[RMDB]
Chemical mapping of a 177-nucleotide RNA with 2A3 and DMS.
Source: RMDB library TTRDES, as collected in RNAgym.
The reactions ran in a buffer of 150 mM KOAc, 10 mM MgCl2 and 150 mM bicine (pH 8.5), at 24 C.
For 2A3, 11,667 sequencing reads were counted.
RNA sequence: GGGAACGACUCGAGUAGAGUCGAAAAGAUAUGGAUGGCCCAGGGAGCCUGUCCUCGGAAACGAGGACAAGGGCUUUGAUCUGGAGCCAUCCUAAGUCAAAGAGUGUUUAUGUUCGCAUAAACACUCCAAUCGGUUAAACUUCGGUUUAACCGAUUGAAAAGAAACAACAACAACAAC
Reactivity to 2A3 in 0.01 (KOAc 150mM, MgCl2 10mM, bicine 150mM(pH8.5), 24C), signal-to-noise 3, nucleotides 027 to 126: g000a010u010a000u050g000g000a000u010g000g000c030c000c010a000g010g010g010a010g000c060c080u140g020u000c010c000u000c000g010g000a020a000a000c010g000a000g020g010a000c030a000a040g120g030g000c020u300u120u020g000a010u000c000u000g000g030a070g000c000c010a000u000c000c000u000a000a000g010u000c000a010a300a010g000a010g000u010g020u020u010u000a010u020g030u040u140c300g000c220a000u010a000a000a010c000a000c000u000c000
Reactivity to DMS in 0.01 (KOAc 150mM, MgCl2 10mM, bicine 150mM(pH8.5), 24C), signal-to-noise 3, nucleotides 027 to 126: g000a010u000a030u010g000g000a020u000g010g000c000c000c000a010g000g000g000a010g030c000c000u000g000u010c000c000u000c010g020g000a010a000a010c000g020a020g010g010a000c010a010a050g040g020g020c000u000u010u020g000a020u000c000u000g000g000a230g010c000c000a010u000c000c000u000a000a090g010u000c000a150a160a160g000a020g010u000g000u000u000u000a000u000g000u010u020c300g010c010a010u000a000a000a010c000a010c000u000c000